Annotation
Structure probing data (DMS and 2A3) for a 207-nucleotide construct. The DMS profile rests on 2,351 reads. Reactivities are rounded to 0.1 and cut off at 0 and 3. For 2A3, 3,834 sequencing reads were counted. 2A3 adducts were read by reverse transcription with SuperScript II with manganese. For DMS the reverse transcriptase was MarathonRT.

RNA sequence: GGGAACGACUCGAGUAGAGUCGAAAAGAAAGAAAGAAAGAAAUCUGACAGAAUGACGGAUUCGAUCGUUGUGGUCGGCGGGCCACCACGUCAUUCCUUCGCACUGUCUCCGGUCAGACCGCCAUAAAAAAGCGGAUCUACUUCGGUAGAUCCGCAACAUAGUUUCCACGUUCGCGUGGAAACUAUGAAAAGAAACAACAACAACAAC
Reactivity to DMS in 0.01 (KOAc 150mM, MgCl2 10mM, bicine 150mM(pH8.5), 24C), signal-to-noise 1, nucleotides 027 to 156: g000a140a090a050g000a070a120a050g020a090a130a140g000a080a100a070u000c010u020g020a180c040a080g000a070a020u010g000a020c030g020g000a230u000u010c070g000a030u000c050g020u000u010g020u010g030g010u000c020g000g000c060g050g000g010c020c020a060c000c040a050c060g000u010c020a100u010u000c020c020u010u000c080g050c090a200c030u000g010u000c020u030c010c000g030g000u000c020a060g010a080c000c000g010c040c050a150u020a020a080a040a070a070a080g020c000g020g010a030u000c010u000a000c000u000u000c300g080g000u000a020g000a020u000c010c000g060c010a010a010
Reactivity to 2A3 in 0.01 (KOAc 150mM, MgCl2 10mM, bicine 150mM(pH8.5), 24C), signal-to-noise 5, nucleotides 027 to 156: g050a010a050a000g070a060a070a000g060a050a070a020g070a040a140a030u040c040u060g010a020c000a020g130a170a210u150g020a030c030g000g040a060u150u110c080g030a070u230c050g010u010u020g000u010g000g010u020c050g020g060c040g020g020g010c010c000a000c010c010a000c000g030u010c020a040u090u060c030c000u070u060c060g050c040a030c040u020g000u020c010u010c030c030g040g010u020c000a020g010a110c000c010g020c020c020a060u280a030a110a020a030a010a010g000c000g010g000a000u000c000u000a000c000u020u050c130g050g000u000a000g000a000u000c000c000g000c000a000a000